[RMDB]
RNA sequence: GGGAACGACUCGAGUAGAGUCGAAAAGGGGUCCGUGAGAGGCUUAGGACAUGCAUUCUACUGAAGCCUCCACGGUAGAUGCAACAGCCUAAGCUCCCCACCUCACGGACGGAGGCACCCAAAGCUUCACGAUCUGCUUCGGCAGAUCGUGAAGCAACUUCUAUGUUGAGUUCGCUCAACAUAGAAGAAAAGAAACAACAACAACAAC
Reactivity to 2A3 in 0.01 (KOAc 150mM, MgCl2 10mM, bicine 150mM(pH8.5), 24C), signal-to-noise 1, nucleotides 027 to 156: g140g010g010g000u000c010c000g000u000g000a010g000a000g000g000c010u020u010a000g030g020a150c030a150u080g000c000a020u240u180c010u000a010c010u020g010a100a030g010c020c010u030c000c000a010c000g000g000u000a000g000a000u000g000c030a080a100c070a300g020c010c000u000a010a010g000c010u030c010c020c010c000a010c000c000u000c000a020c000g010g000a000c000g000g000a000g010g000c000a040c000c010c010a000a120a030g000c000u040u000c000a000c000g000a000u040c040u100g020c010u190u160c300g100g000c020a000g000a010u010c000g000u000g020a000a000g000c000a000a000